The record gives the reactivity of an RNA of 207 nucleotides to DMS. The DMS profile rests on 2,623 reads. It was measured as part of the RMDB library M2RFPK. The reactions ran in a buffer of 150 mM KOAc, 10 mM MgCl2 and 150 mM bicine (pH 8.5), at 24 C.
RNA sequence: GGGAACGACUCGAGUAGAGUCGAAAAACGGUGCGGAAGUUCGCGCUUCCGUGAAACGCGAAUAUCGGACGGUGGCUGCAAGUCGCAUCGCAAAACCGCGGCAAGUGGAGUUAGCGAGAGGAGGCUGAAACCAUCCAACACUUCGGUGUUGGAUGAACUUGGUAGACUGAUUCGUCAGUCUACCAAGAAAAGAAACAACAACAACAAC
Reactivity to DMS in 0.01 (KOAc 150mM, MgCl2 10mM, bicine 150mM(pH8.5), 24C), signal-to-noise 1, nucleotides 027 to 156: a030c060g010g020u020g030c000g020g020a070a090g010u000u000c150g010c150g000c000u000u010c030c100g000u010g020a040a030a020c020g040c000g000a110a110u010a140u000c030g000g000a050c070g070g000u010g020g080c010u000g050c040a060a070g010u000c040g010c000a150u000c000g030c070a030a080a080a090c060c010g080c080g040g010c060a070a090g000u020g000g020a150g010u000u000a100g040c040g010a090g010a140g030g020a080g000g040c040u000g020a100a040a130c090c010a020u000c000c000a000a000c000a000c000u000u000c240g030g010u000g010u020u000g020g010a000u000g000a010a110